[RMDB]
RNA sequence: GGGAACGACUCGAGUAGAGUCGAAAAGAAUGAGAGAUGGGAACGAUUGUUUGCCAAGACUGUAACGAAGCCAUUCAUUACUUUGAGGAUGAGAAGGUUACAACGUUUUAUGGAACGUGCUGCGGACGACUUGGCCUACAUUCGUGUAGGCCAAGUCAAAAGAAACAACAACAACAAC
Reactivity to DMS in 0.01 (KOAc 150mM, MgCl2 10mM, bicine 150mM(pH8.5), 24C), signal-to-noise 2, nucleotides 027 to 126: g010a040a070u030g000a070g040a070g000a070u000g000g040g000a120a080c050g000a090u020u050g020u000u000u000g000c000c050a000a120g000a090c080u070g000u000a060a040c010g070a220a130g030c120c040a100u050u000c020a050u000u060a130c100u010u040u000g000a100g020g000a020u000g000a040g040a100a100g000g040u000u000a000c070a070a070c060g000u000u000u000u000a140u010g000g070a050a010c040g000u030g000c090u010g010c040g040g000a180c050
Reactivity to 2A3 in 0.01 (KOAc 150mM, MgCl2 10mM, bicine 150mM(pH8.5), 24C), signal-to-noise 3, nucleotides 027 to 126: g050a000a060u140g020a050g000a000g010a030u060g000g000g030a030a030c060g090a130u090u080g080u070u070u080g060c010c040a080a000g050a050c040u040g000u080a020a000c000g010a100a000g010c000c000a010u000u090c000a000u000u090a130c100u170u150u210g130a120g080g010a000u070g010a020g000a210a050g070g000u010u000a050c030a080a020c030g000u000u000u010u100a140u140g060g000a020a010c020g020u050g000c020u020g000c050g060g020a000c070
This 177-nucleotide RNA was probed chemically with DMS and 2A3. 2A3 adducts were read by reverse transcription with SuperScript II with manganese. Conditions: 150 mM KOAc, 10 mM MgCl2 and 150 mM bicine (pH 8.5), 24 C. Reactivities are rounded to 0.1 and cut off at 0 and 3. Reactivities are given for positions 27 through 126.